[RMDB]
This 177-nucleotide RNA was probed chemically with DMS and 2A3. For DMS, 2,824 sequencing reads were counted. It was measured as part of the RMDB library RFMREP.
RNA sequence: GGGAACGACUCGAGUAGAGUCGAAAACUAUGCUAAGUUGAUCAAACGUGGUUUGAUUGCUUUGACAGCUAGGAUGUUAGCUUGGAAGCAGCUAUUCAUUUAAAGAGUGCGUAACAGCUCACUAGUCGAGAGAGUAAAGGUUCGCCUUUACUCUCUCAAAAGAAACAACAACAACAAC
Reactivity to DMS in 0.01 (KOAc 150mM, MgCl2 10mM, bicine 150mM(pH8.5), 24C), signal-to-noise 3, nucleotides 027 to 126: c020u000a060u000g020c050u010a010a030g030u000u010g030a020u000c010a000a020a030c020g020u000g040g010u000u000u000g000a010u000u000g010c010u000u000u000g030a210c130a080g000c020u000a020g000g000a040u000g000u010u000a010g010c010u010u030g010g010a120a150g030c100a020g000c020u000a020u000u010c020a030u010u010u000a070a050a120g010a090g030u000g010c100g000u000a090a130c090a140g000c010u000c020a050c020u000a030g000u000c130
Reactivity to 2A3 in 0.01 (KOAc 150mM, MgCl2 10mM, bicine 150mM(pH8.5), 24C), signal-to-noise 2, nucleotides 027 to 126: c020u030a090u300g040c010u040a000a000g020u190u240g230a000u010c000a040a010a050c070g300u280g040g050u120u000u040g000a010u000u020g040c060u000u030u080g080a080c000a010g020c010u000a000g020g020a010u030g000u080u050a020g000c040u020u030g070g050a110a020g070c010a000g000c010u030a030u070u070c010a030u030u000u130a050a100a010g050a010g010u070g040c030g060u020a070a020c010a020g020c000u030c040a010c000u010a030g020u170c070